Chemical mapping of a 177-nucleotide RNA with DMS and 2A3.
In probing experiments dimethyl sulfate is read out at A N1 and C N3, which are open when not base-paired.
It was measured as part of the RMDB library OK2TST.
The RNA was probed in 150 mM KOAc, 10 mM MgCl2 and 150 mM bicine (pH 8.5) at 24 C.
RNA sequence: GGGAACGACUCGAGUAGAGUCGAAAAGCACCCGCUCCAUAUCGUCGGGCGUCCCGGCGGUCAGCGGCUCGGCGGGGGACCCCGCCAGCCGGAGCGUGGCGACCGGACGGGUGAUGUCAAACGAGGGUACUCUAGACAUCUUCGGAUGUCUAGAGUAAAAAGAAACAACAACAACAAC
Reactivity to DMS in 0.01 (KOAc 150mM, MgCl2 10mM, bicine 150mM(pH8.5), 24C), signal-to-noise 2, nucleotides 027 to 126: g000c120a140c000c010c020g010c150u000c000c030a140u020a100u010c010g030u000c200g010g020g010c090g010u010c030c020c010g020g010c000g000g000u010c060a110g000c060g010g020c060u000c260g020g020c000g000g010g040g010g010a110c210c030c010c000g040c030c020a070g020c020c010g000g010a050g000c010g020u000g020g030c030g000a060c120c090g010g000a080c010g000g000g000u000g010a040u000g000u000c060a040a060a110c080g000a090g010g000g020
Reactivity to 2A3 in 0.01 (KOAc 150mM, MgCl2 10mM, bicine 150mM(pH8.5), 24C), signal-to-noise 1, nucleotides 027 to 126: g050c020a060c020c000c010g000c110u000c010c000a040u040a070u200c010g000u000c030g050g000g000c020g060u040c000c000c000g050g000c000g020g020u090c040a070g100c010g100g030c000u090c100g040g000c020g000g010g020g020g080a120c080c000c000c000g000c000c000a000g000c030c000g000g020a040g000c030g050u110g030g050c030g010a040c000c030g000g000a070c020g080g000g000u090g080a110u090g030u050c100a110a040a040c040g020a050g050g060g000

For 2A3, 1,323 sequencing reads were counted.